[RMDB]
RNA sequence: GGGAACGACUCGAGUAGAGUCGAAAACAUACUUGAAAAAGUGAUGUAGAUUUAUAGCCCAUAACUUUUUUGAAUUACAUCGACGAUACGGCGUCGAAAGAAAAAUAAAUAGACCGUAUGAAAGAAAAAAACAACAGUAGCUUCGGCUACUGUUGAACCUAAUUUCGUUGUUCGCAACGAAAUUAGGAAAAGAAACAACAACAACAAC
Reactivity to 2A3 in 0.01 (KOAc 150mM, MgCl2 10mM, bicine 150mM(pH8.5), 24C), signal-to-noise 1, nucleotides 027 to 156: c000a000u040a000c040u070u060g020a010a000a080a000a000g050u040g030a090u020g040u030a080g050a080u060u240u070a180u170a110g040c000c000c000a040u130a150a090c130u040u090u080u100u060u140g110a100a070u130u110a050c070a060u010c000g000a010c000g020a020u000a000c030g000g000c010g000u000c000g000a000a010a030g030a000a020a040a030a020u110a010a000a000u030a000g060a030c000c000g000u000a000u000g040a030a060a050g150a050a080a040a010a030a000a000c000a000a000c000a000g000u000a000g030c000u040u010c160g020g000c010u030a000c000u000g000u000u000g000a010a010
Structure probing data (2A3) for a 207-nucleotide construct. The reactions ran in a buffer of 150 mM KOAc, 10 mM MgCl2 and 150 mM bicine (pH 8.5), at 24 C.